[RMDB]
RNA sequence: GGGAACGACUCGAGUAGAGUCGAAAACGUAGCUUCUAAGUGGCGGCACGAAUGGCGAAUAAGCCAACCUAAGGGGAAGCUACUGAUACCGCCAGCAGUAGCUGCAAUGUGAUGCAGUCAAAGGAGCAAAUACAUAGAAAUUCGUUUCUAUGUAUUUAAAAGAAACAACAACAACAAC
Reactivity to 2A3 in 0.01 (KOAc 150mM, MgCl2 10mM, bicine 150mM(pH8.5), 24C), signal-to-noise 7, nucleotides 027 to 126: c030g030u020a020g000c000u010u000c010u030a130a060g040u010g030g000c000g000g000c010a000c030g080a060a040u020g000g000c010g020a050a040u160a110a010g010c000c000a010a050c010c020u060a070a090g080g010g030g000a010a010g000c000u000a000c000u000g000a000u060a060c000c000g010c000c010a010g000c000a000g010u030a010g000c000u010g010c020a020a040u110g020u080g060a130u030g010c010a010g010u020c010a030a050a000g030g000a020g000c000
Reactivity to DMS in 0.01 (KOAc 150mM, MgCl2 10mM, bicine 150mM(pH8.5), 24C), signal-to-noise 9, nucleotides 027 to 126: c100g010u020a070g010c010u000u000c000u000a120a120g020u020g000g010c020g000g000c040a050c070g000a090a100u010g000g000c010g010a130a130u040a130a160g000c000c010a040a130c070c030u010a090a100g020g010g010g000a120a030g000c000u000a010c010u000g000a060u020a070c020c000g010c030c020a110g010c030a040g000u010a060g010c000u000g000c100a070a080u030g010u050g010a120u000g010c000a030g000u000c040a040a090a080g000g000a030g010c050